[RMDB]
The record gives the reactivity of an RNA of 177 nucleotides to 2A3 and DMS. DMS adducts were read by reverse transcription with MarathonRT.
RNA sequence: GGGAACGACUCGAGUAGAGUCGAAAAGGUACAUACUUCCAAGUACCCAUGGAUUCUGUUGAGCACGACGGGAAGUGUACUGUAAUUGGAGCAGUGCUCCAGAAAUAUCGUCGAGAGCUCCGGACUAGGCCCUAAUAAAUUUCGAUUUAUUAGGGCCAAAAGAAACAACAACAACAAC
Reactivity to 2A3 in 0.01 (KOAc 150mM, MgCl2 10mM, bicine 150mM(pH8.5), 24C), signal-to-noise 2, nucleotides 027 to 126: g050g000u030a010c010a030u190a060c060u020u000c010c030a080a060g060u050a090c000c030c020a090u080g140g030a070u100u060c020u040g130u150u120g020a000g000c010a010c020g030a010c040g000g000g010a010a040g010u010g010u030a010c020u020g070u140a080a150u120u050g040g030a040g000c080a030g300u030g160c020u000c000c000a020g020a020a140a000u140a040u050c010g010u000c010g030a040g050a040g090c020u000c020c020g020g010a000c010u040a110
Reactivity to DMS in 0.01 (KOAc 150mM, MgCl2 10mM, bicine 150mM(pH8.5), 24C), signal-to-noise 4, nucleotides 027 to 126: g010g020u000a010c010a060u000a080c040u000u000c010c020a180a180g020u000a110c010c000c060a140u010g010g000a130u000u000c010u000g020u010u010g010a030g030c010a150c000g000a020c020g010g030g000a030a040g010u000g010u000a000c030u000g000u020a090a120u020u010g010g010a040g030c010a180g020u010g020c010u000c020c020a050g000a050a070a090u010a060u000c000g010u000c000g000a060g000a130g010c000u000c010c040g010g010a030c200u000a080